[RMDB]
This 177-nucleotide RNA was probed chemically with DMS and 2A3. The RNA was probed in 150 mM KOAc, 10 mM MgCl2 and 150 mM bicine (pH 8.5) at 24 C. DMS adducts were read by reverse transcription with MarathonRT. Source: RMDB library 15KREP, as collected in RNAgym.
RNA sequence: GGGAACGACUCGAGUAGAGUCGAAAAUUCAGCGAACAGAAGAGCUCCCUCCUCCGGAGAGAGAAGACCAUAGCGAUAGGGGGAGAUGCUAGGAGUAGGAGGCGACCGAAGCGAGGGGGAAAGUAAAGACUACAAUAUCGUUCGCGAUAUUGUAGUCAAAAGAAACAACAACAACAAC
Reactivity to DMS in 0.01 (KOAc 150mM, MgCl2 10mM, bicine 150mM(pH8.5), 24C), signal-to-noise 1, nucleotides 027 to 126: u030u000c050a040g030c120g000a060a070c080a010g000a120a100g010a090g010c010u000c060c030c000u000c000c000u020c070c140g010g010a110g010a060g000a070g010a070a100g000a130c020c040a070u000a030g020c060g000a160u030a020g000g010g010g020g010a090g000a090u000g000c030u000a020g010g000a020g010u000a020g000g010a040g000g000c050g010a130c140c030g020a080a030g040c080g010a030g010g000g010g000g010a090a030a070g000u010a030a070a170
Reactivity to 2A3 in 0.01 (KOAc 150mM, MgCl2 10mM, bicine 150mM(pH8.5), 24C), signal-to-noise 1, nucleotides 027 to 126: u000u020c010a000g090c000g060a000a000c020a110g140a120a000g010a070g070c010u000c010c000c000u030c020c020u050c020c040g020g000a000g040a010g000a010g000a100a040g040a010c000c000a120u050a030g060c000g080a100u130a150g030g000g020g000g010a050g020a010u060g010c060u060a040g000g040a050g000u070a030g010g090a000g060g020c000g060a020c000c040g040a010a030g020c060g000a050g030g020g000g000g000a010a020a010g050u120a000a050a100